Structure probing data (2A3) for a 207-nucleotide construct.
The data come from the RNA Mapping Database (RMDB), library M2RFPK.
[RMDB]
RNA sequence: GGGAACGACUCGAGUAGAGUCGAAAAAAAUCACCUCGGUAUGAUUAGGGUGAGACCUAGGAACCGUAGGGGUAUUCUCAAAGGAAGCUUUUGCAGUGAAGCCCAUGUAAGUGGGAUAUAACAACAGAUCAGUUUCGCAGUUUCGACUGCGAAACAACUCUACCUUCGAGUUCGCUCGAAGGUAGAGAAAAGAAACAACAACAACAAC
Reactivity to 2A3 in 0.01 (KOAc 150mM, MgCl2 10mM, bicine 150mM(pH8.5), 24C), signal-to-noise 1, nucleotides 027 to 156: a000a000a050u060c030a030c000c000u020c030g110g000u170a190u180g060a130u050u050a020g000g050g000u020g090a030g020a030c000c020u000a010g030g040a010a080c010c000g050u180a000g000g000g020g030u000a000u040u030c060u020c000a070a000a030g070g010a070a060g020c030u120u120u110u080g090c110a070g000u000g160a130a050g000c000c000c000a000u030g030u150a030a200g030u020g000g000g030a000u030a020u030a030a060c110a000a070c030a030g130a130u200c070a070g030u010u000u000c000g000c000a000g000u000u010u130c190g080a020c000u010g000c010g000a000a000a000c000a000a000